Conditions: 150 mM KOAc, 10 mM MgCl2 and 150 mM bicine (pH 8.5), 24 C. This 177-nucleotide RNA was probed chemically with DMS and 2A3. The 2A3 profile rests on 8,275 reads. The data come from the RNA Mapping Database (RMDB), library TTRDEL. For 2A3 the reverse transcriptase was SuperScript II with manganese.

RNA sequence: GGGAACGACUCGAGUAGAGUCGAAAAGAUAUGGAUGACGCUCGAUAAGUAUAGGGUCGGAAACGACCCUGAUACUUUUGACGAGCUAAUCCUAAGUCAAACUUCAAAACCUUCGGGUUUUGAAGAACCUAGGGAUAUAGUUCGCUAUAUCCCUAGGAAAAGAAACAACAACAACAAC
Reactivity to DMS in 0.01 (KOAc 150mM, MgCl2 10mM, bicine 150mM(pH8.5), 24C), signal-to-noise 5, nucleotides 027 to 126: g000a040u000a300u010g000g010a020u000g010a220c300g000c010u000c000g010a150u000a010a020g010u000a010u000a030g000g010g000u000c000g010g000a090a070a170c000g000a000c000c000c000u000g000a010u000a000c000u000u000u010u000g000a190c100g000a010g000c010u000a130a010u000c000c000u000a060a170g010u010c040a110a080a220c010u000u000c000a000a010a000a000c000c000u000u010c260g040g010g000u000u000u000u010g000a020a010g000a050a090
Reactivity to 2A3 in 0.01 (KOAc 150mM, MgCl2 10mM, bicine 150mM(pH8.5), 24C), signal-to-noise 4, nucleotides 027 to 126: g010a010u060a010u120g010g000a000u000g010a010c120g020c010u010c010g070a120u060a300a010g000u000a010u010a030g000g010g010u010c010g010g000a050a050a010c000g010a000c000c010c010u010g000a000u010a010c000u070u090u100u290g170a050c020g000a000g010c000u000a000a010u010c000c000u010a060a000g010u000c050a130a090a140c020u010u010c000a000a000a000a010c010c020u030u080c280g130g000g000u000u000u000u010g000a010a000g010a010a010